[RMDB]
RNA sequence: GGGAACGACUCGAGUAGAGUCGAAAAAACCUUACCUGGGUUUGACAUGCACGGAUUAACCGGUGGAAACAUCGGCCACGCUCGCAAGAGUGGAACGUGCACAGGUGCUGCAUGGCUGUCGUCAGCUUACAAUUCUAGACUUCGGUCUAGAAUUGUAAAAAGAAACAACAACAACAAC
Reactivity to DMS in 0.01 (KOAc 150mM, MgCl2 10mM, bicine 150mM(pH8.5), 24C), signal-to-noise 1, nucleotides 027 to 126: a010a010c010c000u000u000a060c090c000u000g010g000g000u000u010u010g010a160c210a200u000g010c000a010c030g000g000a010u000u040a060a300c010c010g020g000u000g010g000a100a100a120c000a010u000c000g000g020c020c030a130c000g010c000u000c020g000c280a130a120g000a030g000u000g000g000a010a020c020g000u000g000c010a080c050a020g000g000u000g020c060u000g050c140a020u010g010g010c050u010g000u010c090g020u000c040a040g010c090u000

Structure probing data (DMS) for a 177-nucleotide construct.
It was measured as part of the RMDB library RFMREP.